Annotation: This 177-nucleotide RNA was probed chemically with 2A3 and DMS. 2A3 adducts were read by reverse transcription with SuperScript II with manganese. DMS adducts were read by reverse transcription with MarathonRT. Conditions: 150 mM KOAc, 10 mM MgCl2 and 150 mM bicine (pH 8.5), 24 C.
RNA sequence: GGGAACGACUCGAGUAGAGUCGAAAACAGGAAUGGCGGGAUCCCACUCUGCAGGGUCCGCGUUCCAUUCUUUCUUACCUGAUGGCCGGCAUGGUCCCAGCCUCCCCGCUGGCGCCGGCUGGGCAACCUACACUUACAGCUUCGGCUGUAAGUGUAGAAAAGAAACAACAACAACAAC
Reactivity to 2A3 in 0.01 (KOAc 150mM, MgCl2 10mM, bicine 150mM(pH8.5), 24C), signal-to-noise 2, nucleotides 027 to 126: c130a030g050g060a000a000u020g180g000c050g050g090g020a120u160c110c070c010a040c100u300c140u180g130c180a080g000g010g000u050c000c030g140c010g060u100u090c000c010a010u070u000c000u050u150u000c010u130u080a200c020c050u160g180a250u180g170g100c000c010g020g010c030a140u200g050g080u140c080c000c000a010g010c000c050u180c000c020c010c060g070c010u010g000g000c010g010c020c010g000g090c000u000g000g000g070c000a030a050c000
Reactivity to DMS in 0.01 (KOAc 150mM, MgCl2 10mM, bicine 150mM(pH8.5), 24C), signal-to-noise 1, nucleotides 027 to 126: c160a080g000g020a000a000u010g040g020c040g030g000g000a020u000c000c000c040a110c120u000c130u010g020c120a120g020g000g000u000c010c040g010c020g020u000u000c010c020a040u000u000c030u000u010u000c050u050u060a190c050c000u030g000a190u010g010g000c010c040g040g000c000a170u000g040g030u010c300c000c000a040g000c000c050u000c040c000c040c260g000c070u000g010g000c210g040c010c030g010g000c000u000g000g030g000c040a020a030c180